[RMDB]
RNA sequence: GGGAACGACUCGAGUAGAGUCGAAAAAGUUAACUCCCUACAGCUUCGUUGUUGAUUGGUUCUUGAAUGUUGGUGACAUACUUGCUCAACAAGGUCAGCUAUAUCAUAAUAUCGAUAUUGUAGACGGCUUUGACAGACGUGACAUCCGGCUCAAAUCGUUCUAAUUGUACUUCGGUACAAUUAGAACAAAAGAAACAACAACAACAAC
Reactivity to 2A3 in 0.01 (KOAc 150mM, MgCl2 10mM, bicine 150mM(pH8.5), 24C), signal-to-noise 1, nucleotides 027 to 156: a010g080u100u060a110a080c050u050c000c000c000u040a000c040a120g030c090u090u090c130g000u000u020g000u000u020g040a300u050u020g000g040u080u030c020u000u130g150a150a060u110g000u040u020g020g000u000g020a000c000a010u120a050c010u100u270g010c010u010c010a000a030c000a080a000g110g000u010c010a000g040c000u040a030u000a020u030c000a040u020a300a050u080a110u230c030g000a000u000a000u040u010g010u000a000g050a100c060g060g000c000u010u020u040g010a000c000a000g070a030c010g000u020g040a030c030a080u010c010c000g000g000c000u010c110a050a080a080u090c070

Structure probing data (2A3) for a 207-nucleotide construct.
Reactivities are given for positions 27 through 156.
The 2A3 profile rests on 621 reads.
Conditions: 150 mM KOAc, 10 mM MgCl2 and 150 mM bicine (pH 8.5), 24 C.
2A3 adducts were read by reverse transcription with SuperScript II with manganese.